Annotation:
Structure probing data (2A3 and DMS) for a 177-nucleotide construct. For 2A3, 1,499 sequencing reads were counted. The DMS profile rests on 2,600 reads. Values cover nucleotides 27 to 126. DMS adducts were read by reverse transcription with MarathonRT.
RNA sequence: GGGAACGACUCGAGUAGAGUCGAAAAUUCAAGGAUUUACCGGGAAACAAGGUACGUUUCAUGCUCAACAUGCCAUGGACUAUGGCACGAAGGUGGUUGGCGGUACCAAUCCCAAAAAAGCUGGCAACGUAAUCACCCUAUUCGUAGGGUGAUUACGAAAAGAAACAACAACAACAAC
Reactivity to 2A3 in 0.01 (KOAc 150mM, MgCl2 10mM, bicine 150mM(pH8.5), 24C), signal-to-noise 2, nucleotides 027 to 126: u060u000c070a040a090g060g010a040u080u080u090a210c020c040g000g010g020a060a150a070c090a150a180g010g000u000a030c050g000u030u060u180c020a070u150g020c000u000c100a010a040c010a070u040g000c000c000a010u030g030g050a170c080u210a120u010g000g000c000a020c020g040a040a050g070g040u050g040g110u070u100g090g160c020g000g030u000a000c000c000a010a000u020c000c020c000a050a110a030a000a000a020g020c030u020g080g050c040a090a030
Reactivity to DMS in 0.01 (KOAc 150mM, MgCl2 10mM, bicine 150mM(pH8.5), 24C), signal-to-noise 4, nucleotides 027 to 126: u000u000c040a130a150g010g000a250u010u000u000a060c070c040g030g040g010a050a080a110c210a150a090g000g000u000a020c050g000u000u000u000c020a110u000g000c020u000c100a070a150c240a160u000g010c000c000a020u000g030g000a130c220u020a080u000g010g000c000a010c030g010a190a160g000g010u010g020g020u010u010g000g020c000g000g000u010a020c000c010a080a190u010c000c000c010a000a010a060a100a050a090g000c050u000g010g000c080a060a150